Annotation:
An RNA of 177 nucleotides, treated with DMS and 2A3 and read out base by base.
RNA sequence: GGGAACGACUCGAGUAGAGUCGAAAAAUAUGGGGGAUACGGACUCUUUGGGUUACGUGCGAUUUGUUCUUAGCGGAGAGUGUGUAAUUUUACAGUGUUUAAGUAUGAAGGUGAGUACAACAUUGCACUAAUGAUUUACCUUCGGGUAAAUCAUUAGAAAAGAAACAACAACAACAAC
Reactivity to DMS in 0.01 (KOAc 150mM, MgCl2 10mM, bicine 150mM(pH8.5), 24C), signal-to-noise 5, nucleotides 027 to 126: a070u020a040u020g010g000g010g000g010a100u020a050c100g000g000a060c040u010c020u020u000u010g000g010g020u010u010a070c100g030u010g010c030g000a100u020u030u020g000u010u010c050u010u010a120g010c050g010g020a080g010a100g010u000g000u000g000u030a030a060u020u030u010u020a130c060a040g000u010g000u010u010u020a070a090g010u010a020u000g000a070a060g020g010u010g000a100g010u020a040c080a030a050c080a050u010u010g010c170a170
Reactivity to 2A3 in 0.01 (KOAc 150mM, MgCl2 10mM, bicine 150mM(pH8.5), 24C), signal-to-noise 6, nucleotides 027 to 126: a010u210a110u120g020g020g000g000g030a030u080a130c030g040g030a030c030u030c000u060u030u090g090g000g010u080u060a050c020g030u020g030c010g040a080u010u030u130g030u070u050c040u060u130a010g050c040g020g030a020g000a030g070u070g010u020g020u120a060a130u050u090u100u060a070c030a020g030u020g060u060u110u100a090a050g020u030a080u120g100a060a030g090g020u070g060a060g030u030a030c000a020a010c000a040u050u100g030c030a010